[RMDB]
RNA sequence: GGGAACGACUCGAGUAGAGUCGAAAACAAGCCUGGGCAACAUGGCUUUUGUAUCUCAUCUCUACAAAAAUUAGCCAGGCUUGGUGGUUCAUGCCUGCAGUCCCAGCUACUUGGGAUGCUGAGGAGGGAGGAUUGCGUGAGCUUGAGAGAUCGAGGCCAUGAUUCGUAGAUUCGUCUACGAAUCAUGAAAAGAAACAACAACAACAAC
Reactivity to 2A3 in 0.01 (KOAc 150mM, MgCl2 10mM, bicine 150mM(pH8.5), 24C), signal-to-noise 7, nucleotides 027 to 156: c010a010a000g000c000c010u050g010g070g060c060a130a040c020a220u090g070g010c000u070u030u020u040g030u030a060u030c040u030c060a070u020c040u010c020u050a070c070a030a080a060a070a090u150u090a080g040c000c000a010g010g000c010u000u020g020g010u020g020g010u060u090c040a030u120g020c010c020u050g030c030a030g090u010c000c000c000a010g030c080u170a120c060u080u020g010g000g020a020u060g020c030u040g030a040g040g030a040g010g020g010a080g010g030a050u050u120g010c040g030u050g020a020g010c010u070u070g060a040g000a000g000a050u060c090g000a020g010g030c000
Reactivity to DMS in 0.01 (KOAc 150mM, MgCl2 10mM, bicine 150mM(pH8.5), 24C), signal-to-noise 4, nucleotides 027 to 156: c020a030a050g020c010c010u000g010g020g030c060a090a100c120a110u000g020g020c050u000u000u000u010g020u010a060u010c050u000c060a100u000c060u010c020u000a180c050a010a050a030a060a150u000u010a090g010c010c010a030g040g030c010u000u000g000g020u000g010g010u000u000c040a070u000g010c040c010u010g000c030a100g010u000c000c000c010a090g020c090u000a050c120u010u000g000g010g010a160u010g030c040u000g000a110g030g020a260g000g000g000a080g010g020a080u000u000g030c030g020u000g010a070g020c030u000u000g030a100g020a050g010a070u000c040g020a060g020g030c140

Source information: This 207-nucleotide RNA was probed chemically with 2A3 and DMS. For DMS, 10,734 sequencing reads were counted. The reactions ran in a buffer of 150 mM KOAc, 10 mM MgCl2 and 150 mM bicine (pH 8.5), at 24 C. 2A3 adducts were read by reverse transcription with SuperScript II with manganese.